[RMDB]
RNA sequence: GGGAACGACUCGAGUAGAGUCGAAAAGGGGUCCUAUACGUUGAGGUAUAGACAUGAGCUGAAGCCUCCACGGCUCAACAGCUAUACUCCCCACCAACGAAUAGGACGGAGGCACCCAAAACCUCUUCGAUCAAUGUUCGCAUUGAUCGAAGAGGAAGCUACACUUCCCCUUCGGGGGAAGUGUAGCAAAAGAAACAACAACAACAAC
Reactivity to 2A3 in 0.01 (KOAc 150mM, MgCl2 10mM, bicine 150mM(pH8.5), 24C), signal-to-noise 1, nucleotides 027 to 156: g060g010g040g000u020c010c000u000a000u010a020c000g000u010u010g040a050g030g020u000a020u000a000g080a070c170a300u240g000a020g010c010u030g000a050a010g020c000c020u030c020c020a040c030g020g000c000u010c010a040a100c120a020g120c000u010a000u000a010c050u110c060c090c020c000a000c030c000a010a000c000g030a010a000u010a000g010g000a010c000g000g010a000g010g100c020a050c110c010c100a030a190a050a080c000c010u040c000u050u050c010g000a000u000c000a000a000u000g060u110u110c270g030c070a000u010u000g000a000u000c000g000a000a000g000a010g010g000a000a000
Source: RMDB library RNAMAK, as collected in RNAgym. Structure probing data (2A3) for a 207-nucleotide construct. The 2A3 profile rests on 1,633 reads. 2A3 adducts were read by reverse transcription with SuperScript II with manganese.